Chemical mapping of a 207-nucleotide RNA with DMS and 2A3. For 2A3 the reverse transcriptase was SuperScript II with manganese. For 2A3, 3,920 sequencing reads were counted. For DMS the reverse transcriptase was MarathonRT. Values cover nucleotides 27 to 156. The reactions ran in a buffer of 150 mM KOAc, 10 mM MgCl2 and 150 mM bicine (pH 8.5), at 24 C.
RNA sequence: GGGAACGACUCGAGUAGAGUCGAAAAAUGCUAAGUGCCUGGUCUAAUAUCCCUAGGCAGGAAGUGACAGAGAAGUAUCCAGAUUCUGCCUCCUGGAGGCUCAACUUCAGGAUCCAAGCACUUAACCAUGUCACACAUUGCUGCUCACAUCAAGGGAUCAUAAUUAGGCUUUCGAGCCUAAUUAUGAAAAAGAAACAACAACAACAAC
Reactivity to DMS in 0.01 (KOAc 150mM, MgCl2 10mM, bicine 150mM(pH8.5), 24C), signal-to-noise 3, nucleotides 027 to 156: a110u000g010c010u000a010a090g020u000g040c010c000u000g000g020u010c070u000a040a120u000a140u000c020c020c020u000a080g010g020c030a050g020g010a090a140g000u000g010a120c000a130g000a180g020a090a190g020u000a120u000c050c040a160g010a240u000u000c030u040g020c000c000u000c020c030u000g020g030a010g030g010c160u000c300a060a130c010u010u000c010a050g030g010a120u000c040c030a020a060g000c000a050c000u010u000a030a060c030c070a110u000g010u000c030a050c040a140c160a170u000u000g000c000u010g020c000u000c030a130c070a080u000c050a100a040g010g040g030a140
Reactivity to 2A3 in 0.01 (KOAc 150mM, MgCl2 10mM, bicine 150mM(pH8.5), 24C), signal-to-noise 5, nucleotides 027 to 156: a010u110g000c010u030a030a020g010u000g020c010c000u020g000g040u070c050u060a080a070u050a100u140c010c000c000u010a030g000g000c010a000g010g020a090a050g030u030g060a030c060a030g130a020g050a190a020g080u100a080u090c050c020a020g020a160u080u030c010u050g030c000c020u030c010c010u000g000g000a010g020g040c110u090c230a050a090c020u010u000c010a000g010g000a010u030c030c000a020a000g010c010a030c020u020u020a020a010c060c040a050u070g020u060c010a010c000a000c010a080u050u180g040c010u010g020c010u030c030a110c000a150u120c070a100a040g020g010g000a010